[RMDB]
RNA sequence: GGGAACGACUCGAGUAGAGUCGAAAAGGCGCCGUGCUGACUCACGCGAACCUCACCGGUCAGGCGAUGACCGCGCUCUACACCAGUGGCGCCAAUAUCAACAGCGACGUCGGUUUCGUGGGCGUCCUCUCUAGCUAACCUUCGGGUUAGCUAGAGAAAAAGAAACAACAACAACAAC
Reactivity to DMS in 0.01 (KOAc 150mM, MgCl2 10mM, bicine 150mM(pH8.5), 24C), signal-to-noise 3, nucleotides 027 to 126: g000g010c050g010c040c010g000u010g020c120u020g010a120c040u010c100a210c130g080c060g000a070a110c030c050u010c010a090c120c000g000g000u000c050a010g030g010c150g000a180u000g000a030c010c020g000c010g000c020u010c070u020a110c300a180c100c040a120g000u000g000g000c030g030c000c010a000a050u030a060u000c090a100a110c110a120g000c080g000a030c030g010u000c020g000g000u020u020u000c040g010u010g030g000g000c010g000u000c020c010
Reactivity to 2A3 in 0.01 (KOAc 150mM, MgCl2 10mM, bicine 150mM(pH8.5), 24C), signal-to-noise 6, nucleotides 027 to 126: g000g000c000g000c020c010g120u110g050c060u060g040a120c030u030c050a030c040g040c010g020a050a060c010c020u090c020a070c040c030g000g020u020c050a020g050g210c090g150a060u050g020a030c000c000g000c000g020c020u020c030u060a060c050a110c070c010a030g010u060g070g010c010g000c010c020a000a020u170a070u120c040a020a100c030a030g040c010g040a010c000g030u060c040g030g060u020u070u070c060g010u110g030g010g000c000g000u010c020c000

Overview
An RNA of 177 nucleotides, treated with DMS and 2A3 and read out base by base. The reactions ran in a buffer of 150 mM KOAc, 10 mM MgCl2 and 150 mM bicine (pH 8.5), at 24 C. The data come from the RNA Mapping Database (RMDB), library OK1LIB.